[RMDB]
RNA sequence: GGGAACGACUCGAGUAGAGUCGAAAAGAUAUGGAUAAGGCGAGGAGAGUAGUCGUUGAAAUCAUCGGCUUUCGGAAACGAAAGCCGAUGAUGGAGACUACCUCUCCGAUGAGCCUUAUCCUAAGUCGAGAAUUACUACGUUCGCGUAGUAAUUCUCAAAAGAAACAACAACAACAAC
Reactivity to DMS in 0.01 (KOAc 150mM, MgCl2 10mM, bicine 150mM(pH8.5), 24C), signal-to-noise 1, nucleotides 027 to 126: g000a060u010a300u000g010g000a030u000a010a010g000g010c010g020a240g010g000a030g000a020g000u010a000g000u010c010g000u000u020g000a160a070a020u000c000a010u000c010g000g010c030u000u000u000c000g010g000a100a090a300c020g000a020a000a020g030c000c000g010a000u000g000a000u000g040g010a050g000a010c000u000a000c160c100u000c000u010c000c000g000a100u000g020a300g020c010c010u000u000a000u000c000c000u000a030a150g000u000c080